[RMDB]
An RNA of 177 nucleotides, treated with DMS and 2A3 and read out base by base. Source: RMDB library OK1LIB, as collected in RNAgym. For 2A3, 855 sequencing reads were counted. Conditions: 150 mM KOAc, 10 mM MgCl2 and 150 mM bicine (pH 8.5), 24 C. Values cover nucleotides 27 to 126. For DMS, 1,070 sequencing reads were counted.
RNA sequence: GGGAACGACUCGAGUAGAGUCGAAAACUGAUGAUUGACAACACCACCUGUCCUACAGCCGUACUCGGUAAUGUGAUUAUCAGCUUAGGGAAAUAUCUGGGGUCAGUAAAUUAUAAUUCUGAAGGCACCUUACGACACCGUUCGCGGUGUCGUAAGGAAAAGAAACAACAACAACAAC
Reactivity to DMS in 0.01 (KOAc 150mM, MgCl2 10mM, bicine 150mM(pH8.5), 24C), signal-to-noise 1, nucleotides 027 to 126: c000u020g000a000u030g010a140u020u000g060a050c190a060a090c100a030c000c000a000c000c060u040g000u000c040c000u000a020c100a060g000c010c080g000u000a020c130u020c130g000g000u060a060a090u000g020u000g000a050u000u000a000u000c090a040g000c180u000u000a060g050g000g000a090a050a070u080a010u020c060u000g000g000g000g050u000c050a040g000u050a000a010a090u000u110a060u000a000a160u040u020c000u000g020a190a090g020g000c000a040
Reactivity to 2A3 in 0.01 (KOAc 150mM, MgCl2 10mM, bicine 150mM(pH8.5), 24C), signal-to-noise 3, nucleotides 027 to 126: c020u060g020a020u090g010a060u180u130g130a000c030a080a050c010a120c060c000a050c020c000u010g000u030c030c030u110a000c030a050g040c050c000g040u000a070c030u080c070g000g060u000a040a170u020g050u030g080a090u050u070a000u050c040a000g030c050u090u240a180g080g000g070a000a160a090u200a080u100c050u110g000g010g000g000u020c000a000g090u090a020a020a020u210u090a050u130a180a300u160u040c020u000g040a070a040g020g000c070a040